[RMDB]
RNA sequence: GGGAACGACUCGAGUAGAGUCGAAAAACCUUUGUGAGCGUCGAAGAACAUCUCCAGAGCAUGCAGAACCCAUUGGGUUCGUGCAUGCGACGAAGGAGAUGGGAGACGCUCACUCUGGUAAAAGACUCAGCUACUCCUUCGGGAGUAGCUGAGUCAACAUAUCAUGAUCCUUCGGGAUCAUGAUAUGAAAAGAAACAACAACAACAAC
Reactivity to DMS in 0.01 (KOAc 150mM, MgCl2 10mM, bicine 150mM(pH8.5), 24C), signal-to-noise 2, nucleotides 027 to 156: a030c000c000u000u000u000g030u000g000a030g000c000g010u000c000g010a140a200g010a120a130c010a010u010c000u020c000c010a160g020a300g010c000a020u000g050c000a300g000a010a010c000c000c000a300u000u010g080g060g010u000u000c000g010u000g070c000a010u010g020c000g040a080c130g010a300a220g020g000a020g000a000u000g020g000g010a250g040a030c000g000c000u040c000a000c000u000c010u000g000g030u000a060a060a100a120g000a020c000u000c010a000g000c000u000a000c030u000c000c000u020u010c300g050g000g020a040g030u000a000g000c000u010g000a000g020u000c000a000a110
Reactivity to 2A3 in 0.01 (KOAc 150mM, MgCl2 10mM, bicine 150mM(pH8.5), 24C), signal-to-noise 2, nucleotides 027 to 156: a000c000c000u000u000u010g000u000g000a000g000c010g000u000c010g080a300a090g030a110a040c010a000u000c000u000c010c000a020g020a000g040c000a010u010g000c010a000g000a000a000c020c030c020a210u220u300g010g000g000u000u010c000g020u030g000c000a000u010g010c010g040a090c020g060a080a070g000g000a000g010a000u010g000g010g010a070g000a000c000g000c000u000c000a000c000u000c000u000g000g010u020a040a060a010a070g000a000c010u000c000a010g000c010u000a000c010u000c010c000u040u120c230g090g000g000a000g000u000a000g000c000u000g000a000g000u000c000a000a000
Chemical mapping of a 207-nucleotide RNA with DMS and 2A3. The reactions ran in a buffer of 150 mM KOAc, 10 mM MgCl2 and 150 mM bicine (pH 8.5), at 24 C. The DMS profile rests on 3,242 reads.